[RMDB]
RNA sequence: GGGAACGACUCGAGUAGAGUCGAAAAAGAGGCCGGAUCGUAGAGGCGCCAGCGCGUACUCGUGGCCACUACGUCAGCGUACGCAUGAUCGAUCCUGCGCGGCCAGUACUGAUCUAUGAUCGCGCUGACCCCCUCAAGUGUUCGCACUUGAGGGGGUAAAAGAAACAACAACAACAAC
Reactivity to 2A3 in 0.01 (KOAc 150mM, MgCl2 10mM, bicine 150mM(pH8.5), 24C), signal-to-noise 1, nucleotides 027 to 126: a000g120a020g040g000c000c030g040g040a070u050c010g040u010a030g020a050g050g010c030g000c000c000a060g000c060g020c040g080u080a160c000u000c060g130u090g040g010c020c000a100c030u080a050c040g040u000c000a030g000c010g030u090a040c160g000c020a020u070g020a030u060c010g040a050u000c000c030u050g010c160g030c050g080g070c070c000a000g030u080a050c130u100g050a100u020c040u060a070u160g020a030u040c090g040c020g000c060u030g000
Reactivity to DMS in 0.01 (KOAc 150mM, MgCl2 10mM, bicine 150mM(pH8.5), 24C), signal-to-noise 2, nucleotides 027 to 126: a080g000a210g030g010c000c020g000g000a060u000c060g020u010a070g010a050g010g000c040g010c030c070a100g020c130g000c050g020u010a110c040u000c070g010u010g040g010c010c270a090c200u000a050c170g000u010c000a050g020c140g000u000a100c130g020c010a060u010g000a080u010c040g010a130u020c020c020u000g010c020g010c100g000g000c020c010a020g000u030a050c060u000g000a090u000c020u020a070u010g010a040u020c060g000c060g030c020u000g000